[RMDB]
RNA sequence: GGGAACGACUCGAGUAGAGUCGAAAAGAUAUGGAUUGAUUAACUUAUUUCUGUGACAGCUAGUCGAUGGUCGGAAACGACCAUACGACUUGGACCUGUACAGAAAUAAGUUAAUCAAUCCUAAGUCCAUUUUUUUCUAGUUCGCUAGAAAAAAAUGAAAAGAAACAACAACAACAAC
Reactivity to DMS in 0.01 (KOAc 150mM, MgCl2 10mM, bicine 150mM(pH8.5), 24C), signal-to-noise 2, nucleotides 027 to 126: g000a070u000a300u010g010g000a000u000u000g000a000u000u000a010a010c000u020u000a010u000u000u000c000u000g000u000g010a040c000a010g010c020u000a030g000u000c000g040a050u000g000g020u000c010g000g000a090a150a250c010g010a000c000c010a000u000a000c020g020a000c000u010u000g000g000a120c300c010u000g000u000a020c000a000g000a000a010a000u000a010a020g000u000u000a010a000u000c000a000a000u000c000c000u000a010a110g000u000c050